This 207-nucleotide RNA was probed chemically with 2A3 and DMS. The RNA was probed in 150 mM KOAc, 10 mM MgCl2 and 150 mM bicine (pH 8.5) at 24 C. For 2A3 the reverse transcriptase was SuperScript II with manganese. It was measured as part of the RMDB library RNAMAK.
RNA sequence: GGGAACGACUCGAGUAGAGUCGAAAAGUUGUCGGUUCGCCGACAACAAAAAGAUAUGGAAAUCUACCCACCCUUUACAUAGUCGAAGAACUCGGAAACGAGGGAGACUAUGAAAGGAGGAUUUCCUAAGUCAAAAAGCCUACCUUCGGGUAGGCAAGAUUUAUUUACUAUUCGUAGUAAAUAAAUCAAAAGAAACAACAACAACAAC
Reactivity to 2A3 in 0.01 (KOAc 150mM, MgCl2 10mM, bicine 150mM(pH8.5), 24C), signal-to-noise 3, nucleotides 027 to 156: g020u000u000g010u000c000g000g050u060u090c260g040c130c000g000a000c010a010a010c010a000a060a020a010a010g090a050u190a070u080g000g000a000a010a000u020c010u060a300c010c010c010a020c000c000c000u010u000u030a150c000a000u000a000g000u000c010g140a290a000g020a060a060c000u000c010g000g060a070a070a060c020g000a010g000g000g010a040g000a000c000u010a000u000g000a010a000a000g000g000a010g020g000a010u010u000u000c000c000u020a070a020g070u130c030a020a010a000a080a010g060c080c000u080a000c000c000u030u040c150g020g000g000u000a000g000g020c000a010a020
Reactivity to DMS in 0.01 (KOAc 150mM, MgCl2 10mM, bicine 150mM(pH8.5), 24C), signal-to-noise 1, nucleotides 027 to 156: g010u000u000g020u000c000g070g020u000u020c300g070c060c000g030a030c000a050a040c020a010a070a070a070a030g000a140u000a270u000g000g030a000a000a000u000c000u000a120c040c040c000a300c110c000c000u000u000u000a150c000a000u000a020g000u000c010g000a160a120g000a170a170c000u000c000g000g020a100a080a180c010g000a040g000g020g000a270g040a030c000u000a010u000g000a000a000a070g000g000a140g000g000a060u000u000u000c000c000u000a070a140g000u000c040a060a090a170a170a170g020c000c000u000a010c000c020u000u000c290g030g000g000u000a010g020g000c000a000a010